[RMDB]
RNA sequence: GGGAACGACUCGAGUAGAGUCGAAAAUGGCAGGUGAGAAAGAGGGUUGGUGCUCUAAGCCGAAUUGGUUCACAUCACCCAUCUAACAACUUGACUAAAAAACGUGUAGGGUGAUUGUAAUUAGACAAACAGCCUUGACUUUCGAGUCAAGGCUGUUAAAAGAAACAACAACAACAAC
Reactivity to DMS in 0.01 (KOAc 150mM, MgCl2 10mM, bicine 150mM(pH8.5), 24C), signal-to-noise 2, nucleotides 027 to 126: u000g000g000c100a040g000g010u000g000a070g010a050a080a050g000a100g000g000g020u040u000g020g010u000g000c100u040c070u020a060a090g000c010c010g010a100a080u000u000g000g010u010u000c120a040c060a020u000c000a000c000c000c010a180u010c140u000a080a080c170a080a080c050u000u000g000a110c100u000a010a040a050a030a100a060c160g000u000g020u000a190g020g000g030u000g010a010u010u000g000u010a030a110u000u020a070g000a090c150a070